[RMDB]
RNA sequence: GGGAACGACUCGAGUAGAGUCGAAAAUCCCAAAGCGGAUUUAGCUCGGUUGGGAGAGCUCCAGACCGAAGAUCUGGGAGUCCUGUGUUCGAUCCACAGAAUUCGCACCAUAAACAACGGGAGAUUCACUGGGAUGGUAGUUCGCUACCAUCCCAGUAAAAGAAACAACAACAACAAC
Reactivity to 2A3 in 0.01 (KOAc 150mM, MgCl2 10mM, bicine 150mM(pH8.5), 24C), signal-to-noise 2, nucleotides 027 to 126: u030c020c000c000a050a010a000g010c030g000g020a020u000u000u160a040g000c000u010c030g140g020u100u180g140g100g000a060g000a000g000c000u000c010c000a000g010a010c000c120g180a150a010g040a170u010c000u030g000g030g090a030g030u050c000c000u040g000u000g010u020u070c030g000a010u000c010c000a000c000a000g000a010a000u000u000c010g000c020a040c000c070a100u150a080a190a040c070a030a050c070g030g040g000a100g040a100u110u150c030
Reactivity to DMS in 0.01 (KOAc 150mM, MgCl2 10mM, bicine 150mM(pH8.5), 24C), signal-to-noise 2, nucleotides 027 to 126: u000c000c000c000a100a170a070g020c000g010g050a040u000u000u000a080g050c050u000c060g010g010u080u000g010g020g000a170g000a240g010c040u000c000c020a030g070a030c000c200g110a070a130g000a170u000c000u000g000g050g000a060g000u000c120c040u000g000u000g040u040u000c160g000a230u010c060c050a040c000a110g030a100a040u000u000c020g000c000a190c080c090a010u000a010a140a070c170a080a090c140g000g000g000a140g000a120u020u010c120

Chemical mapping of a 177-nucleotide RNA with 2A3 and DMS. For DMS the reverse transcriptase was MarathonRT. Conditions: 150 mM KOAc, 10 mM MgCl2 and 150 mM bicine (pH 8.5), 24 C. For 2A3, 1,294 sequencing reads were counted.